[RMDB]
RNA sequence: GGGAACGACUCGAGUAGAGUCGAAAAGGUCUUACGUCAGCCAUGAGAACAACGGUAACUCUCAUGGUUGUCACAGAGAUGUGACGACGCUGACCAUCUAAGUUACCGCUUGUUAGAUGGUAAGACAGACGCUAUCAGGGUUCGCCCUGAUAGCGUCAAAAGAAACAACAACAACAAC
Reactivity to DMS in 0.01 (KOAc 150mM, MgCl2 10mM, bicine 150mM(pH8.5), 24C), signal-to-noise 2, nucleotides 027 to 126: g020g000u000c020u000u000a070c120g000u010c030a300g000c060c010a020u010g020a080g020a000a020c040a020a000c020g000g000u000a020a020c030u000c050u000c140a030u000g000g000u000u000g000u000c010a000c010a020g000a250g020a200u000g000u000g000a020c010g020a080c140g000c290u000g000a050c100c020a020u030c060u000a030a000g000u000u000a030c000c020g000c160u000u000g000u000u000a070g000a010u000g000g020u000a030a100g020a040c010a110
Reactivity to 2A3 in 0.01 (KOAc 150mM, MgCl2 10mM, bicine 150mM(pH8.5), 24C), signal-to-noise 1, nucleotides 027 to 126: g100g010u030c010u050u070a030c090g040u020c040a010g010c000c000a040u070g050a030g010a210a010c020a000a040c030g010g000u010a010a010c000u020c010u000c050a020u030g080g000u010u030g010u010c000a000c020a010g040a010g000a050u020g010u000g030a010c080g030a060c060g020c280u110g030a040c030c000a020u070c050u030a020a010g000u000u030a000c000c030g020c110u030u010g000u030u020a020g010a070u010g010g030u040a040a050g020a010c020a010